[RMDB]
RNA sequence: GGGAACGACUCGAGUAGAGUCGAAAAUGUGACUGGACUGAAAGUGGUGAUUACACCCUUGCCAAUACUACAACAGAACCACUCAAACUUUUUGCUGCUGAGACUUUACGUGCCACUGAAGAGGCGUUAAGAUUCCUGUUCGCAGGAAUCAAAAGAAACAACAACAACAAC
Reactivity to DMS in 0.01 (KOAc 150mM, MgCl2 10mM, bicine 150mM(pH8.5), 24C), signal-to-noise 7, nucleotides 027 to 129: u010g000u000g020a060c040u030g030g010a060c050u000g000a060a080a090g040u050g010g000u000g010a180u060u060a130c070a060c020c010c010u020u030g000c060c020a070a070u000a090c040u040a080c060a050a050c010a050g000a090a080c000c040a000c040u000c030a030a050a070c110u020u020u000u020u000g020c000u040g000c000u000g040a060g000a140c050u000u000u000a010c160g000u000g000c050c030a050c080u020g000a140a110g020a060g000g000c070g040u030u060a050a040
Reactivity to 2A3 in 0.01 (KOAc 150mM, MgCl2 10mM, bicine 150mM(pH8.5), 24C), signal-to-noise 9, nucleotides 027 to 129: u130g010u020g030a020c020u020g010g030a000c020u030g020a050a030a020g120u200g060g000u000g030a080u050u170a100c020a020c010c000c000u040u060g020c010c020a060a020u090a110c050u030a000c020a080a010c010a030g020a040a020c010c010a010c020u080c040a030a120a140c040u060u040u050u100u160g020c030u000g000c000u030g030a000g020a120c000u060u080u050a040c070g030u050g080c030c020a060c060u040g020a070a020g030a050g030g000c010g030u020u060a060a030